[RMDB]
Structure probing data (2A3 and DMS) for a 177-nucleotide construct. The 2A3 profile rests on 1,016 reads. The data come from the RNA Mapping Database (RMDB), library M2PK90. The RNA was probed in 150 mM KOAc, 10 mM MgCl2 and 150 mM bicine (pH 8.5) at 24 C.
RNA sequence: GGGAACGACUCGAGUAGAGUCGAAAAAUACAGCGUAAUCGAGCGGAGGAAAACGGCACUCCGUAAAUCCGGUACGAUUAUGAUCCCACUGCGUCGACGCUAGAUGCAGAACCGGAUUGCCGAGGAACAACGUCUGGAGAUUCGUCUCCAGACGUUGAAAAGAAACAACAACAACAAC
Reactivity to 2A3 in 0.01 (KOAc 150mM, MgCl2 10mM, bicine 150mM(pH8.5), 24C), signal-to-noise 1, nucleotides 027 to 126: a000u190a050c120a010g060c020g010u030a100a000u070c060g030a030g060c020g040g020a020g050g040a140a220a010a000c030g050g000c040a000c060u050c000c010g030u010a020a020a020u010c020c000g010g000u090a070c050g030a030u090u040a030u170g120a020u070c020c000c040a060c000u010g010c000g000u030c040g020a080c070g030c240u100a060g000a030u000g000c010a010g030a040a010c010c010g000g040a030u000u090g000c000c030g030a000g120g130a090a060
Reactivity to DMS in 0.01 (KOAc 150mM, MgCl2 10mM, bicine 150mM(pH8.5), 24C), signal-to-noise 2, nucleotides 027 to 126: a120u000a070c250a050g040c010g010u000a020a000u000c030g030a200g000c010g040g000a030g000g030a100a050a050a100c110g030g000c060a100c130u000c010c000g000u000a020a030a020u000c000c000g000g020u030a160c060g000a040u000u000a030u000g010a090u000c030c000c030a220c030u000g010c010g030u000c010g010a120c200g030c280u010a090g000a030u000g000c000a010g020a160a040c060c000g000g000a060u000u000g000c090c030g000a130g000g040a060a200